[RMDB]
RNA sequence: GGGAACGACUCGAGUAGAGUCGAAAAGUAGAGUGUAUCAUGUCAGUAAGCAUGCCGGGGAAUGGUGGUUUACCCCGUUAUCAAAUGAUUACCGACCAAUAAUUGGCGUAACUCGUUUCGCGUUGGCAAAGUCACGGCGUGUUCGCACGCCGUGAAACUGUAAUUCGAGCUUCGGCUCGAAUUACAGAAAAGAAACAACAACAACAAC
Reactivity to 2A3 in 0.01 (KOAc 150mM, MgCl2 10mM, bicine 150mM(pH8.5), 24C), signal-to-noise 1, nucleotides 027 to 156: g160u090a040g000a010g090u160g040u040a070u230c030a070u030g120u080c030a000g020u020a060a030g040c000a000u080g040c000c000g010g000g000g020a000a060u020g000g000u040g000g050u000u010u120a150c000c000c000c020g000u030u020a040u050c040a000a000a140u130g000a010u060u080a030c020c020g130a130c060c110a060a060u300a010a120u130u090g000g000c000g020u010a040a040c090u010c060g020u000u040u150c080g000c090g050u060u020g000g010c090a060a000a000g080u020c000a010c000g000g020c000g000u000g020u000u020c020g010c030a000c000g040c000c000g000u000g000a000a000a000
Chemical mapping of a 207-nucleotide RNA with 2A3. The data come from the RNA Mapping Database (RMDB), library M2RFPK. For 2A3, 430 sequencing reads were counted. As a SHAPE reagent, 2A3 marks flexible, mostly unpaired nucleotides at the ribose 2'-OH.